[RMDB]
RNA sequence: GGGAACGACUCGAGUAGAGUCGAAAAAGUACGAGUUGUUCUAGCUCUUUGAGACCGGUCUCACCACCUACAGGAAUCGCCUUAGCACGCGAGAUUUUGAGUCCAUUAUACUCUUUGGGAUUGUGGCAUAGCAUCCCCUUUUCGAAGGGGAUGCUAUAAAAGAAACAACAACAACAAC
Reactivity to DMS in 0.01 (KOAc 150mM, MgCl2 10mM, bicine 150mM(pH8.5), 24C), signal-to-noise 1, nucleotides 027 to 126: a070g020u020a080c000g030a020g040u030u010g000u000u020c020u020a080g000c040u000c050u000u040u000g060a190g000a130c140c070g020g050u000c020u000c070a070c050c020a060c110c030u010a030c060a090g020g000a060a130u000c070g000c010c030u000u000a070g000c100a110c130g020c030g010a040g000a090u010u020u010u000g010a100g030u000c090c010a060u000u000a100u000a060c080u000c090u000u000u000g040g000g000a130u000u000g020u000g040g020c100
The record gives the reactivity of an RNA of 177 nucleotides to DMS. The RNA was probed in 150 mM KOAc, 10 mM MgCl2 and 150 mM bicine (pH 8.5) at 24 C.